Source: RMDB library M2RFOK, as collected in RNAgym.
Structure probing data (2A3) for a 207-nucleotide construct.
For 2A3, 500 sequencing reads were counted.

RNA sequence: GGGAACGACUCGAGUAGAGUCGAAAAGCUCUGGAAUUGAGGCCCCUCUAACAAUAAUCCAAAACUACUUCGCAGAGUAAUCUGCCGAAUCGUAGGAUGCCCAUAACUAUCUAUUUUUGGAGCAUCUAAAACUGUCAGUGCUUCGGCACUGACAGAAGUUACUCCAGAUCUUCGGAUCUGGAGUAACAAAAGAAACAACAACAACAAC
Reactivity to 2A3 in 0.01 (KOAc 150mM, MgCl2 10mM, bicine 150mM(pH8.5), 24C), signal-to-noise 1, nucleotides 027 to 156: g050c010u000c040u050g030g020a070a030u230u050g010a040g010g000c000c000c000c000u160c090u100a140a100c070a060a150u200a150a040u030c020c040a000a030a040a080c020u020a000c010u030u030c070g000c010a010g000a010g060u070a030a180u070c000u000g010c070c050g000a000a080u070c020g000u000a040g050g000a000u010g000c000c000c000a030u080a150a020c000u030a110u300c020u110a160u130u000u050u030u000g000g000a070g010c000a000u000c030u050a030a080a150a150c000u000g000u000c000a010g000u000g030c010u020u030c130g080g000c000a000c000u010g000a000c000a000g000a000a020
Values cover nucleotides 27 to 156. 2A3 adducts were read by reverse transcription with SuperScript II with manganese.